RNA sequence: GGGAACGACUCGAGUAGAGUCGAAAAUAGUGGGCGCCGGCGUGACUGUGAACCGCUAUGACGAAGCGUAUCGUAUGAGCCGGAACCUCGACUCCGAAGGCUUCGACGUGCUGCUGGUCCAGGGCAGAAGAACUUCCUGAUUCGUCAGGAAGUUCUUAAAAGAAACAACAACAACAAC
Reactivity to DMS in 0.01 (KOAc 150mM, MgCl2 10mM, bicine 150mM(pH8.5), 24C), signal-to-noise 2, nucleotides 027 to 126: u000a080g030u000g000g000g000c210g010c050c030g020g020c070g010u010g030a070c060u000g030u010g000a060a110c170c050g040c040u010a040u020g000a100c110g000a080a040g020c010g020u000a090u000c020g020u010a090u000g010a080g030c020c000g000g010a070a090c150c040u000c030g010a060c020u000c000c020g000a080a130g010g000c010u000u000c040g000a110c100g010u000g000c070u000g000c000u010g000g000u000c040c020a080g010g000g000c060a060g000
The data come from the RNA Mapping Database (RMDB), library OK2TRN. The record gives the reactivity of an RNA of 177 nucleotides to DMS. For DMS, 2,121 sequencing reads were counted. Values cover nucleotides 27 to 126. The reactions ran in a buffer of 150 mM KOAc, 10 mM MgCl2 and 150 mM bicine (pH 8.5), at 24 C.